Structure probing data (DMS and 2A3) for a 207-nucleotide construct. 2A3 adducts were read by reverse transcription with SuperScript II with manganese. The 2A3 profile rests on 3,039 reads. Source: RMDB library M2RFPK, as collected in RNAgym. For DMS the reverse transcriptase was MarathonRT. Conditions: 150 mM KOAc, 10 mM MgCl2 and 150 mM bicine (pH 8.5), 24 C.
RNA sequence: GGGAACGACUCGAGUAGAGUCGAAAAAACCCGUUGAUUGCAAUUGAACCGUCCUGUUAUCGAAAGAUAGGCAGAAGAUACGAAAUGUGUGACAGCAUGGGAAGUAAAGGCAGACCGUGGUUCCCUUAAAAUCGUCGAAUCUUCGGAUUCGACGAAACGUUGUAAUGUAGUUCGCUACAUUACAACGAAAAGAAACAACAACAACAAC
Reactivity to DMS in 0.01 (KOAc 150mM, MgCl2 10mM, bicine 150mM(pH8.5), 24C), signal-to-noise 4, nucleotides 027 to 156: a070a080c000c000c020g030u000u000g010a140u010u000g010c000a090a200u000u010g000a100a070c030c050g010u000c070c010u010g030u000u000a050u000c040g010a150a110a180g010a030u000a040g020g020c010a030g010a070a070g000a110u000a120c050g010a050a060a050u000g020u000g020u000g010a110c090a100g010c010a090u010g020g010g020a090a090g020u000a050a060a060g020g020c060a060g000a080c030c050g040u000g010g010u010u000c000c000c010u000u010a040a040a090a130u000c000g020u000c000g010a030a000u000c000u000u000c300g050g000a020u000u000c000g000a000c000g010a000a010a070
Reactivity to 2A3 in 0.01 (KOAc 150mM, MgCl2 10mM, bicine 150mM(pH8.5), 24C), signal-to-noise 4, nucleotides 027 to 156: a000a000c050c010c000g020u060u060g070a300u060u110g000c050a100a140u040u120g040a110a050c070c000g030u050c040c000u010g040u060u040a020u050c020g040a040a040a040g030a040u040a030g080g000c020a020g040a140a040g050a060u100a090c050g060a020a080a080u160g020u020g020u020g060a030c020a020g010c020a020u080g010g030g030a050a060g030u130a060a040a020g050g020c030a010g020a050c020c030g030u040g010g020u020u040c000c000c000u020u030a110a120a030a090u010c000g000u000c000g000a000a000u000c000u000u030c090g040g000a000u010u000c000g010a000c000g000a000a000a000